[RMDB]
RNA sequence: GGGAACGACUCGAGUAGAGUCGAAAAGAUAUGGAGUCCGCCCAUAUUGUCAGCUCCGUCGGAAACGACCGAGCUUGGAUUUAUAUGUAACAAGACUCCUAAGUCAAAACGCUGGUUCGCCAGCGAACAAAUAGAGAAACUUCGGUUUCUCUAUUUGAAAAGAAACAACAACAACAAC
Reactivity to DMS in 0.01 (KOAc 150mM, MgCl2 10mM, bicine 150mM(pH8.5), 24C), signal-to-noise 5, nucleotides 027 to 126: g000a030u010a300u010g000g000a010g010u000c000c050g010c300c160c000a020u000a000u000u010g010u000c010a040g000c010u000c000c300g010u010c000g020g000a110a100a130c000g010a010c000c210g000a010g010c000u010u010g010g010a030u000u010u010a000u000a010u000g000u000a070a100c140a200a060g000a020c000u000c000c000u010a050a140g010u020c030a060a080a080a160c020g000c000u000g000g000u000u000c240g010c000c010a010g010c010g000a050a080
Reactivity to 2A3 in 0.01 (KOAc 150mM, MgCl2 10mM, bicine 150mM(pH8.5), 24C), signal-to-noise 3, nucleotides 027 to 126: g040a030u070a060u160g000g010a000g000u000c010c010g020c040c050c010a010u020a000u020u080g020u000c000a000g000c010u000c010c030g010u000c000g000g040a130a080a090c030g010a000c000c030g020a000g020c010u020u150g030g000a000u000u300u020a030u010a000u030g090u070a100a110c060a230a040g000a020c000u010c000c000u010a210a020g050u040c030a000a000a100a140c020g000c000u020g030g020u060u040c170g070c090c000a020g000c000g000a000a020
Source: RMDB library TTRDEL, as collected in RNAgym. This 177-nucleotide RNA was probed chemically with DMS and 2A3. The RNA was probed in 150 mM KOAc, 10 mM MgCl2 and 150 mM bicine (pH 8.5) at 24 C.